[RMDB]
Chemical mapping of a 177-nucleotide RNA with 2A3 and DMS.
The 2A3 profile rests on 3,287 reads.
Source: RMDB library OK1LIB, as collected in RNAgym.
Conditions: 150 mM KOAc, 10 mM MgCl2 and 150 mM bicine (pH 8.5), 24 C.
RNA sequence: GGGAACGACUCGAGUAGAGUCGAAAAGACCGUCAGUUAGACGGAAGAAGUGCAUAAAUCCACAACGGAAGACAAUAUAAUGCACAAAUGUGGAUAAGCGUACGGAUCUACGUGCGCUAAACGUGAGCCCGGUGAUUAUAUUCGUAUAAUCACCGGGAAAAGAAACAACAACAACAAC
Reactivity to 2A3 in 0.01 (KOAc 150mM, MgCl2 10mM, bicine 150mM(pH8.5), 24C), signal-to-noise 4, nucleotides 027 to 126: g120a020c000c000g010u010c000a060g030u090u260a060g000a000c010g090g060a060a010g040a040a000g000u050g000c040a050u120a180a120a020u020c010c000a030c050a220a000c060g180g000a110a030g080a080c040a030a000u100a020u080a280a060u090g010c010a000c000a020a120a030u200g010u020g040g040a040u040a140a010g000c000g000u000a000c000g000g080a030u040c030u250a100c030g000u000g000c000g000c000u040a020a010a000c060g090u070g080a010g020
Reactivity to DMS in 0.01 (KOAc 150mM, MgCl2 10mM, bicine 150mM(pH8.5), 24C), signal-to-noise 4, nucleotides 027 to 126: g000a150c010c000g020u000c000a220g010u050u020a090g000a020c030g000g000a160a070g050a110a120g000u000g040c000a030u040a060a120a060u010c010c000a070c120a090a170c260g030g000a100a090g020a130c230a080a130u030a060u040a100a060u030g000c040a040c020a060a040a070u000g000u010g000g010a120u000a060a030g020c000g010u000a010c000g000g000a120u120c200u040a120c000g030u000g000c000g010c000u000a000a020a030c080g000u010g000a120g010